[RMDB]
RNA sequence: GGGAACGACUCGAGUAGAGUCGAAAACUAAAAAUACAACAAUUAUCUGGGCGUGGUCGUGGGCGCCUGAAAUCUCAGCUACUCGGGAGGCUGAGGCAGAAAAAUCGCUUGAACCCAGGAGGUAGAGGUUGCAGUGAGCCGAGAUCGCACCAUCGCAAUAUUCGUAUCUCUUCGGAGAUACGAAUAUAAAAGAAACAACAACAACAAC
Reactivity to 2A3 in 0.01 (KOAc 150mM, MgCl2 10mM, bicine 150mM(pH8.5), 24C), signal-to-noise 1, nucleotides 027 to 156: c070u140a080a040a000a090a120u160a070c080a100a000c060a120a160u240u140a110u280c080u190g010g070g000c010g060u020g020g000u040c070g070u040g130g010g000c020g070c020c020u010g040a020a020a020u020c000u000c000a020g020c000u020a020c020u100c130g000g010g020a040g070g000c060u160g070a010g010g000c070a010g180a040a120a010a000a010u060c030g000c000u040u100g060a050a040c000c030c030a110g030g110a060g060g010u060a060g010a030g050g010u000u060g020c000a030g010u010g200a000g040c050c030g060a070g040a060u030c000g040c010a050c000c000a030u140c040g000c010a010